[RMDB]
RNA sequence: GGGAACGACUCGAGUAGAGUCGAAAACAAGCCAUAAGCAUGAGCCCCCUAUUUCCAGGGACAUCCCAUUCCCAUAGUGAUGGAUCAGCAAGACCUCUGCCAGCACACACGGAGUCUUUGGCUUCGGCCGGCUGUCGCUAUUCGUAGCGACAGCCGGAAAAGAAACAACAACAACAAC
Reactivity to 2A3 in 0.01 (KOAc 150mM, MgCl2 10mM, bicine 150mM(pH8.5), 24C), signal-to-noise 2, nucleotides 027 to 126: c060a050a000g080c060c010a070u060a120a110g100c080a020u090g010a020g000c010c000c000c100c030u080a100u050u110u050c010c010a010g010g000g040a000c000a100u060c010c000c000a010u040u000c030c020c010a100u120a070g070u030g140a180u140g000g080a030u110c010a030g030c060a200a030g000a100c000c040u030c000u000g040c000c020a070g020c010a100c000a000c000a030c160g000g050a030g000u000c060u060u140u210g040g000c000u070u000c010g080g040